RNA sequence: GGGAACGACUCGAGUAGAGUCGAAAAAUAGCUCUAGUGCAAAUGGCAGCCUGGUUGGCACAACUUUGCAGGGCAAGCCUAUUGGUAUGUUCUUCCCUUAUGACAUCGAACUUGUCACAGGAAAGCAAUCGAUAUCACUUCGGUGAUAUCAAAAGAAACAACAACAACAAC
Reactivity to DMS in 0.01 (KOAc 150mM, MgCl2 10mM, bicine 150mM(pH8.5), 24C), signal-to-noise 8, nucleotides 027 to 129: a040u040a090g020c000u030c050u000a080g060u030g000c060a000a000a000u040g000g000c180a100g040c030c040u040g030g010u050u030g010g020c020a070c100a120a050c000u050u030u000g040c000a010g040g020g050c070a000a000g000c040c010u020a100u040u040g000g030u010a010u060g040u000u000c000u010u010c030c010c020u010u060a130u070g000a030c000a030u050c260g030a070a090c070u020u040g000u000c000a020c290a060g040g050a070a070a060g000c220a020a020u100c170
Reactivity to 2A3 in 0.01 (KOAc 150mM, MgCl2 10mM, bicine 150mM(pH8.5), 24C), signal-to-noise 9, nucleotides 027 to 129: a000u090a020g010c000u000c010u030a050g100u020g040c030a030a020a090u100g040g020c040a010g030c020c010u150g140g020u090u110g050g010c020a020c010a080a060c030u050u020u040g000c020a000g000g000g000c020a030a000g020c000c010u070a180u070u130g050g000u100a120u130g100u050u060c060u040u030c010c000c000u030u080a190u100g020a020c010a030u070c120g080a090a130c070u050u040g020u020c010a010c040a060g130g070a090a020a000g070c060a030a030u160c110
The data come from the RNA Mapping Database (RMDB), library 15KLIB. The record gives the reactivity of an RNA of 170 nucleotides to DMS and 2A3. DMS adducts were read by reverse transcription with MarathonRT.